[RMDB]
RNA sequence: GGGAACGACUCGAGUAGAGUCGAAAAGAAAUUACGUUUCCUUUACACUUCUCAAACCGGGAUCAAGAGAAGCAAAGCAUCCCUCAUAUCCACGAUUGAGGGUGUCGUGGAGUAUACUGUACCAAAAAGAGCGAACACGGCUUCGGCCGUGUUCGAAGUAAAUGGCGCAGUUCGCUGCGCCAUUUACAAAAGAAACAACAACAACAAC
Reactivity to 2A3 in 0.01 (KOAc 150mM, MgCl2 10mM, bicine 150mM(pH8.5), 24C), signal-to-noise 1, nucleotides 027 to 156: g050a010a090a010u190u070a050c060g010u040u080u030c000c020u000u080u110a070c040a020c010u130u120c000u040c030a130a150a100c030c030g030g060g000a110u100c140a250a080g000a000g070a030a020g020c080a170a040a000g000c000a050u040c030c000c010u030c010a120u100a010u160c010c000a010c010g010a030u000u050g010a000g010g030g010u000g000u000c020g000u000g000g000a030g020u070a070u000a100c160u100g130u100a070c060c060a020a000a000a070a000g110a030g090c020g000a000a000c000a000c050g000g000c010u010u110c240g000g000c000c010g000u010g000u000u000c000g000a000a000